[RMDB]
RNA sequence: GGGAACGACUCGAGUAGAGUCGAAAAUGUUCAAGCUUUCUAUGAACUAUCUUCUUUUUACGAUAUGAGAAGUCGUUUAUUAGUUACCUUGCUGAUAUUGGAAGUUAUUUCAUUGAUACUAAGUAGAGACUCAUUAUCCAUUCGUGGAUAAUGAGUCAAAAGAAACAACAACAACAAC
Reactivity to DMS in 0.01 (KOAc 150mM, MgCl2 10mM, bicine 150mM(pH8.5), 24C), signal-to-noise 4, nucleotides 027 to 126: u020g010u000u010c080a120a100g000c090u010u000u000c010u000a030u010g010a020a030c030u000a020u000c010u000u010c000u000u010u030u000u000a060c080g010a060u000a070u010g010a170g020a100a140g010u000c090g000u000u000u000a010u000u000a020g000u000u000a070c280c220u000u010g000c030u000g000a050u010a050u020u010g010g010a030a040g000u000u010a030u010u000u000c010a040u000u000g000a120u000a060c090u010a030a110g010u000a110g010a250
Reactivity to 2A3 in 0.01 (KOAc 150mM, MgCl2 10mM, bicine 150mM(pH8.5), 24C), signal-to-noise 3, nucleotides 027 to 126: u120g010u040u020c050a080a050g020c060u070u040u030c000u010a030u020g000a020a000c000u010a050u010c030u010u020c000u060u220u040u100u160a030c030g030a010u030a050u270g230a180g030a250a020g000u000c010g010u070u040u000a030u000u000a020g030u020u090a190c060c080u060u170g000c000u020g010a020u010a060u090u090g030g010a000a030g010u010u030a050u030u010u010c010a010u040u020g040a010u020a090c050u090a080a130g050u040a030g090a060